[RMDB]
RNA sequence: GGGAACGACUCGAGUAGAGUCGAAAAUCUCCGUGAUUCGUCACGGAGAAACAUAAAUAAAAUGGGUUCAACUCCCACCCAUUUCCGAGGGUAUCGGAAACCAACCUUCGCUCUUCGGAGCGAAGAAUGUAGUACAUUAAUUCGUUAAUGUACUACAAAAAGAAACAACAACAACAAC
Reactivity to 2A3 in 0.01 (KOAc 150mM, MgCl2 10mM, bicine 150mM(pH8.5), 24C), signal-to-noise 3, nucleotides 027 to 126: u000c000u000c000c010g010u000g000a020u020u100c210g020u010c130a000c010g010g000a010g000a000a000a010c010a010u290a090a110a020u220a070a100a030a070u060g030g000g000u080u110c050a060a040c050u020c030c000c010a010c000c000c020a050u030u010u000c000c000g010a020g030g070g090u200a070u050c000g010g000a020a000a000c030c010a010a060c010c010u000u000c000g010c010u000c000u040u070c220g110g000a000g000c000g000a000a000g000a010a010
Reactivity to DMS in 0.01 (KOAc 150mM, MgCl2 10mM, bicine 150mM(pH8.5), 24C), signal-to-noise 6, nucleotides 027 to 126: u010c000u010c000c000g020u000g010a020u010u010c180g030u000c000a020c000g010g000a000g000a000a030a080c120a120u020a090a070a110u010a050a040a080a070u000g010g000g010u000u000c190a080a300c160u000c010c000c010a210c020c000c000a110u000u000u000c010c010g030a020g010g000g010u000a070u000c010g010g000a020a040a090c250c070a040a100c100c010u000u000c000g000c000u000c000u000u000c180g010g000a010g020c000g010a000a000g010a040a050